[RMDB]
RNA sequence: GGGAACGACUCGAGUAGAGUCGAAAAAAGCUAACUAAGUCUAACCUUAGUAGGAAGUAAGGUAGGCGUGUGAACUUCCGAACGGCAUGUGAUUGUGAAGGGCCGGAUCUAAUUUAGUACAUGGGAACCGAAUGGAAAGGUUCGCCUUUCCAUUCGGAAAAGAAACAACAACAACAAC
Reactivity to DMS in 0.01 (KOAc 150mM, MgCl2 10mM, bicine 150mM(pH8.5), 24C), signal-to-noise 2, nucleotides 027 to 126: a050a030g000c010u020a090a030c020u000a070a120g020u000c000u000a060a150c110c000u000u000a030g010u100a140g000g050a070a020g000u000a000a030g000g020u000a000g000g000c060g020u020g000u000g030a050a210c040u000u000c030c010g040a080a080c060g010g000c020a140u020g020u000g000a060u000u040g030u070g000a090a050g020g020g000c030c030g000g000a060u030c080u000a040a030u000u010u030a080g000u000a080c170a010u000g010g020g010a090a300
Reactivity to 2A3 in 0.01 (KOAc 150mM, MgCl2 10mM, bicine 150mM(pH8.5), 24C), signal-to-noise 1, nucleotides 027 to 126: a000a000g090c070u110a000a000c000u000a030a030g010u000c000u000a050a210c030c000u000u050a000g040u180a010g220g000a060a000g000u090a030a030g010g050u050a020g000g000c000g000u030g050u020g050a040a040c000u040u020c010c000g000a020a010c000g000g010c050a080u070g070u070g050a070u120u060g030u000g110a030a000g050g000g000c010c080g000g050a000u010c000u000a000a190u060u100u160a050g090u090a080c030a060u120g000g000g150a100a000

An RNA of 177 nucleotides, treated with DMS and 2A3 and read out base by base. Values cover nucleotides 27 to 126. The DMS profile rests on 2,097 reads. DMS adducts were read by reverse transcription with MarathonRT. 2A3 adducts were read by reverse transcription with SuperScript II with manganese. For 2A3, 817 sequencing reads were counted. The reactions ran in a buffer of 150 mM KOAc, 10 mM MgCl2 and 150 mM bicine (pH 8.5), at 24 C.